[RMDB]
Chemical mapping of a 177-nucleotide RNA with 2A3 and DMS. For 2A3 the reverse transcriptase was SuperScript II with manganese.
RNA sequence: GGGAACGACUCGAGUAGAGUCGAAAAAUCAGCACGAUAUUCAUGAGUAAAGGAAGAAUAACGAAACGCCGGAUGCCCGGCAGAGAGAUCAAGCGCCAUCCGGCAAAAAAAUAGUGUACGCCGCUGCGUAUAUCCUUAAAUUCGUUUAAGGAUAUACAAAAGAAACAACAACAACAAC
Reactivity to 2A3 in 0.01 (KOAc 150mM, MgCl2 10mM, bicine 150mM(pH8.5), 24C), signal-to-noise 4, nucleotides 027 to 126: a000u080c030a010g020c020a000c030g010a010u040a100u090u050c040a100u180g110a050g140u170a180a140a060g060g050a070a120g040a060a110u110a110a020c050g080a160a050a020c090g000c000c010g000g000a010u030g020c030c050c000g020g000c040a010g020a000g000a010g000a090u100c080a120a030g040c030g020c030c000a000u010c000c020g000g040c020a060a040a000a000a000a000a000u110a010g030u040g010u010a000c030g010c000c010g010c000u000g000c010
Reactivity to DMS in 0.01 (KOAc 150mM, MgCl2 10mM, bicine 150mM(pH8.5), 24C), signal-to-noise 5, nucleotides 027 to 126: a070u010c050a080g020c080a110c010g010a090u000a040u010u000c050a070u010g000a160g020u020a070a080a110g000g000a130a080g010a080a050u010a080a110c050g020a100a140a110c190g000c000c020g010g000a030u010g010c110c050c050g000g010c070a030g000a080g000a160g000a130u010c040a140a130g010c030g010c270c010a020u000c020c030g000g010c030a000a000a030a070a020a010a020u010a050g000u010g010u000a060c050g010c010c050g020c040u010g000c140